[RMDB]
RNA sequence: GGGAACGACUCGAGUAGAGUCGAAAAACCGUUGCUGCCACCACUAUUACGGCCAUCACAAGAAAAUUCAUGCAAGUGGAAACGGUGAUAGUAGCAGCUGGUAUGACACGUUGGUAGCAGUAGCGGUGUUUACAAGAAGCUUCGGCUUCUUGUAAACAAAAGAAACAACAACAACAAC
Reactivity to DMS in 0.01 (KOAc 150mM, MgCl2 10mM, bicine 150mM(pH8.5), 24C), signal-to-noise 3, nucleotides 027 to 126: a040c000c030g020u000u000g020c010u010g010c010c040a080c010c010a030c030u010a120u000u010a040c040g010g010c010c020a040u000c000a010c030a110a100g000a080a070a090a050u000u000c000a010u000g010c260a100a110g020u030g000g000a030a040a130c180g000g000u000g010a020u000a070g030u010a100g020c200a140g020c050u010g000g020u000a010u010g000a110c160a060c190g010u050u000g010g020u000a050g000c000a010g000u000a000g000c000g000g010u000
Reactivity to 2A3 in 0.01 (KOAc 150mM, MgCl2 10mM, bicine 150mM(pH8.5), 24C), signal-to-noise 8, nucleotides 027 to 126: a000c000c000g000u000u000g000c010u000g000c000c000a010c000c000a010c010u050a040u100u070a030c020g010g010c020c010a010u010c000a000c010a030a080g130a160a130a040a010u070u040c010a030u080g100c060a130a060g040u030g050g000a050a070a050c060g040g020u010g010a010u030a060g120u100a030g070c120a010g010c030u060g100g030u090a080u080g080a050c040a020c300g080u140u100g000g000u000a010g000c010a000g000u010a010g000c000g020g000u010

Structure probing data (DMS and 2A3) for a 177-nucleotide construct. The RNA was probed in 150 mM KOAc, 10 mM MgCl2 and 150 mM bicine (pH 8.5) at 24 C. For 2A3 the reverse transcriptase was SuperScript II with manganese.